[RMDB]
RNA sequence: GGGAACGACUCGAGUAGAGUCGAAAACGACUGGUUGCCGCGUCGGGUAGGCGCCGUUCGACCUCACGCGCAACGGUCUGGGCGGCCAGGCGCACCUGGGGAAACGACCAGCAAGGCGCGAUCCGGGGUAUUGCCUCUAAUUCGUUAGAGGCAAUACAAAAGAAACAACAACAACAAC
Reactivity to DMS in 0.01 (KOAc 150mM, MgCl2 10mM, bicine 150mM(pH8.5), 24C), signal-to-noise 8, nucleotides 027 to 126: c100g010a080c030u000g010g020u000u000g010c080c050g010c030g020u010c170g000g010g020u010a060g020g020c050g020c090c120g020u010u000c020g000a070c010c010u000c230a070c040g020c020g010c020a050a060c090g010g010u000c020u000g010g010g020c060g000g000c020c030a070g000g010c090g010c080a080c060c030u010g010g000g000g000a120a090a120c100g010a070c010c020a060g010c100a140a110g000g000c020g010c020g020a110u010c020c030g010g000g010
Reactivity to 2A3 in 0.01 (KOAc 150mM, MgCl2 10mM, bicine 150mM(pH8.5), 24C), signal-to-noise 6, nucleotides 027 to 126: c030g080a030c020u080g190g020u070u100g060c090c040g020c020g040u030c040g020g050g030u100a060g060g000c080g090c100c070g040u060u030c020g010a050c010c000u050c020a040c020g020c000g000c010a040a060c040g000g000u010c030u040g020g030g030c030g000g020c030c020a060g070g000c020g000c030a100c020c030u040g000g000g000g020a110a130a050c050g060a100c030c000a010g040c050a070a080g030g000c010g000c010g010a050u010c010c010g010g020g020

Source: RMDB library OK2TRN, as collected in RNAgym. This 177-nucleotide RNA was probed chemically with DMS and 2A3.